Chemical mapping of a 177-nucleotide RNA with DMS and 2A3. Values cover nucleotides 27 to 126. The reactions ran in a buffer of 150 mM KOAc, 10 mM MgCl2 and 150 mM bicine (pH 8.5), at 24 C.
RNA sequence: GGGAACGACUCGAGUAGAGUCGAAAACGCUUUGUACGAAAGAUUUCUCUGCGACAUUAAUUUGGGGCAGAUGGGCAGUUGUGAUUCAAUGUCAAUUGAAUAGCUCAACAAUCAUCUUCCCCACAAUCUUAUUAGACCACUUCGGUGGUCUAAUAAGAAAAGAAACAACAACAACAAC
Reactivity to DMS in 0.01 (KOAc 150mM, MgCl2 10mM, bicine 150mM(pH8.5), 24C), signal-to-noise 2, nucleotides 027 to 126: c180g000c030u000u030u000g030u030a040c110g010a120a040a030g000a090u000u020u000c010u020c000u000g010c080g000a100c110a040u020u000a060a120u020u000u000g010g020g010g000c130a000g000a030u000g020g000g020c170a180g000u040u000g000u040g000a010u000u000c030a000a000u010g000u050c300a080a060u030u000g000a000a000u000a070g020c070u000c000a000a000c000a050a250u040c000a000u000c000u000u000c000c000c000c000a020c230a080a050u040
Reactivity to 2A3 in 0.01 (KOAc 150mM, MgCl2 10mM, bicine 150mM(pH8.5), 24C), signal-to-noise 9, nucleotides 027 to 126: c050g030c060u080u080u100g140u190a080c060g080a090a040a050g040a080u010u050u030c010u000c020u050g050c030g080a050c050a060u210u300a180a130u150u100u130g000g000g000g000c010a000g000a000u000g000g020g060c140a150g030u010u000g000u010g020a000u000u010c000a000a010u060g240u300c120a140a030u010u000g000a000a030u030a090g150c030u000c040a000a010c000a000a010u060c000a000u000c010u010u010c000c000c000c000a000c000a000a000u010